About this RNA
An RNA of 207 nucleotides, treated with 2A3 and DMS and read out base by base. The reactions ran in a buffer of 150 mM KOAc, 10 mM MgCl2 and 150 mM bicine (pH 8.5), at 24 C. DMS adducts were read by reverse transcription with MarathonRT. Source: RMDB library OK3TST, as collected in RNAgym. Values are in units of 0.01, from 0 to 300, in steps of 10. For DMS, 2,369 sequencing reads were counted. Values cover nucleotides 27 to 156.

RNA sequence: GGGAACGACUCGAGUAGAGUCGAAAAGUCAGAAUCUCUGAUGGUGAGCCCCAAGUAUCAAUAUUUUGUAAAACUGAUUCCAAAGGUUAGCUAAGUGUGAAUCAGUGCGUUAGAUGAUCUUUAACGUUAAUUAUCUUAGCUGGAUUUCUCAAAGGGACACUGGUGAAAAUUUCGAUUUUCACCAGUGAAAAGAAACAACAACAACAAC
Reactivity to 2A3 in 0.01 (KOAc 150mM, MgCl2 10mM, bicine 150mM(pH8.5), 24C), signal-to-noise 4, nucleotides 027 to 156: g010u000c010a000g020a260a300u100c130u020c010u130g020a040u020g030g100u080g050a030g040c010c040c040c020a080a060g060u100a070u210c060a100a110u090a160u170u260u210u170g070u090a040a000a020a050c000u000g000a000u020u000c020c010a070a060a090g170g010u100u030a050g040c010u010a010a010g010u010g040u050g070a010a010u000c010a000g010u000g000c000g000u000u000a020g010a080u100g040a070u060c040u000u050u000a010a000c000g000u000u040a040a040u110u090a030u050c000u000u000a000g000c010u030g000g040a090u040u150u020c110u050c050a110a170a160g090g030g040a000
Reactivity to DMS in 0.01 (KOAc 150mM, MgCl2 10mM, bicine 150mM(pH8.5), 24C), signal-to-noise 1, nucleotides 027 to 156: g010u000c020a060g000a150a100u000c150u000c000u000g010a080u000g000g040u000g020a190g020c060c050c000c020a040a140g020u020a130u000c050a060a100u000a120u000u000u000u000g020u000a030a050a050a060c010u020g010a010u000u000c010c070a140a130a170g030g030u000u000a020g000c030u000a030a070g000u000g000u020g020a030a020u000c010a060g030u000g010c000g000u000u000a020g000a020u010g000a200u000c170u000u000u000a010a010c010g010u000u000a070a070u000u000a070u000c040u000u000a070g000c030u010g000g010a270u000u000u020c020u000c040a060a080a090g000g000g010a300